[RMDB]
RNA sequence: GGGAACGACUCGAGUAGAGUCGAAAAACGAGUCGUACGCGACUCGAAUGGUAUUGUCGGCGUAAAAGAACAAGACGUCACCGGACGCGACCGGGCUAAAAAGCUAAACGUCAUCUACGGAUGACGAAAAACGGACCUGGGUUCGCCCAGGUCCGAAGCUCUAUCCAUUCUUCGGAAUGGAUAGAGCAAAAGAAACAACAACAACAAC
Reactivity to 2A3 in 0.01 (KOAc 150mM, MgCl2 10mM, bicine 150mM(pH8.5), 24C), signal-to-noise 1, nucleotides 027 to 156: a000c010g000a000g010u000c000g030u110a020c240g000c010g100a000c000u000c000g000a040a060u060g040g060u060a030u210u210g140u140c080g000g050c000g030u090a010a020a040a160g090a080a050c030a050a030g050a060c000g000u000c050a000c110c040g070g030a040c100g020c010g000a000c000c000g020g000g010c040u090a060a060a000a040a000g010c040u080a050a070a000c040g000u000c000a000u040c000u000a020c270g080g000a000u000g020a000c000g040a120a030a000a000a000c000g000g000a000c000c000u000g000g050g000u000u100c230g060c000c000c000a000g000g000u000c000c000g020a000a000
Conditions: 150 mM KOAc, 10 mM MgCl2 and 150 mM bicine (pH 8.5), 24 C. This 207-nucleotide RNA was probed chemically with 2A3. Reactivities are given for positions 27 through 156. Source: RMDB library M2RFPK, as collected in RNAgym. The 2A3 profile rests on 479 reads.